This 207-nucleotide RNA was probed chemically with 2A3 and DMS. For DMS, 4,264 sequencing reads were counted.
[RMDB]
RNA sequence: GGGAACGACUCGAGUAGAGUCGAAAACCGUAGGGUCAGCCACCUCAAUGAUGUCACAGGAACCGUACAUUCGAAAGAGUGUACUCAGUACUGUGAUUGAGAGGUGGAUGACCCUAAACGGAAAAUCUCCACUGUGUGUUCGCACACAGUGGAGAAAGAUAUGGGAGUUGUUCGCAACUCCCAUAUCAAAAGAAACAACAACAACAAC
Reactivity to 2A3 in 0.01 (KOAc 150mM, MgCl2 10mM, bicine 150mM(pH8.5), 24C), signal-to-noise 1, nucleotides 027 to 156: c000c000g010u010a010g010g000g000u000c000a000g020c020c010a010c010c000u020c010a070a300u150g030a030u070g040u000c000a000c000a000g040g000a020a000c000c010g000u000a000c010a000u000u010c010g070a120a040a040g000a040g000u020g000u000a010c010u010c000a010g000u000a000c000u000g000u000g000a000u000u000g010a010g000a000g000g000u000g000g000a000u010g000a000c000c000c000u000a000a000a000c000g100g020a040a030a010a290u010c000u000c000c000a000c000u000g000u000g010u000g010u040u090c290g040c100a000c000a000c000a010g020u030g000g000a000g000a000a010a000
Reactivity to DMS in 0.01 (KOAc 150mM, MgCl2 10mM, bicine 150mM(pH8.5), 24C), signal-to-noise 2, nucleotides 027 to 156: c000c000g050u000a010g030g020g050u000c000a000g010c020c000a020c000c000u010c010a110a090u000g020a110u020g020u000c020a000c000a030g010g000a180a130c220c300g000u000a000c000a000u000u010c000g010a150a160a260g010a030g030u000g000u000a020c010u000c010a060g010u000a200c010u010g000u000g010a000u000u000g000a080g020a010g000g060u050g000g020a020u010g000a030c000c010c010u000a000a000a040c020g020g000a100a050a070a110u000c010u000c000c010a000c020u010g000u000g040u000g000u020u000c300g050c020a030c020a000c000a020g000u020g010g010a010g000a000a030a070
Record summary:
For 2A3, 2,199 sequencing reads were counted. For 2A3 the reverse transcriptase was SuperScript II with manganese. DMS adducts were read by reverse transcription with MarathonRT.